[RMDB]
RNA sequence: GGGAACGACUCGAGUAGAGUCGAAAAAGAUAAGAAAUCUAAGAAGAUUCCAUGUAUCACACAGGGUCAUAGAAACUCUUCAUGUCAACACAAGAAACAUAGACAAUUCUCUAUUCAACUAAGUGAAAAGGUUUGUAGAUUUGUCACUUGUAAAGAGAUACUGACACCUUUUCGAAGGUGUCAGUAUAAAAGAAACAACAACAACAAC
Reactivity to 2A3 in 0.01 (KOAc 150mM, MgCl2 10mM, bicine 150mM(pH8.5), 24C), signal-to-noise 2, nucleotides 027 to 156: a010g100a050u190a130a050g070a070a230a020u020c070u170a150a070g040a040a010g000a080u130u050c020c010a030u070g060u110a080u040c080a040c040a020c010a120g080g060g000u070c050a040u050a110g070a030a050a010c030u010c000u020u000c010a110u060g050u120c040a060a000c000a060c010a100a020g050a110a120a000c030a060u190a030g020a020c000a020a020u140u070c020u000c000u110a070u080u120c020a010a050c060u120a140a150g110u050g280a030a110a070a060g090g010u040u050u080g020u050a010g000a050u030u000u000g010u050c020a020c060u000u010g000u060a000a140a000g110a000g020
Reactivity to DMS in 0.01 (KOAc 150mM, MgCl2 10mM, bicine 150mM(pH8.5), 24C), signal-to-noise 1, nucleotides 027 to 156: a030g000a160u000a070a080g010a090a040a100u010c040u000a190a290g000a180a010g030a080u000u000c000c000a090u000g030u000a100u000c080a030c070a150c190a100g000g010g000u000c030a080u000a110g010a140a040a080c050u000c010u000u000c070a120u000g000u000c040a100a160c070a070c010a130a120g020a100a070a130c100a040u000a170g000a030c040a050a060u000u000c040u010c030u000a170u000u000c160a030a130c010u000a030a080g000u030g000a030a030a120a170g030g000u000u000u000g000u000a040g000a200u010u010u010g040u010c000a110c070u000u000g000u000a040a040a030g000a150g000
The record gives the reactivity of an RNA of 207 nucleotides to 2A3 and DMS. The DMS profile rests on 1,225 reads. DMS adducts were read by reverse transcription with MarathonRT. The 2A3 profile rests on 863 reads. Values cover nucleotides 27 to 156. For 2A3 the reverse transcriptase was SuperScript II with manganese. The RNA was probed in 150 mM KOAc, 10 mM MgCl2 and 150 mM bicine (pH 8.5) at 24 C.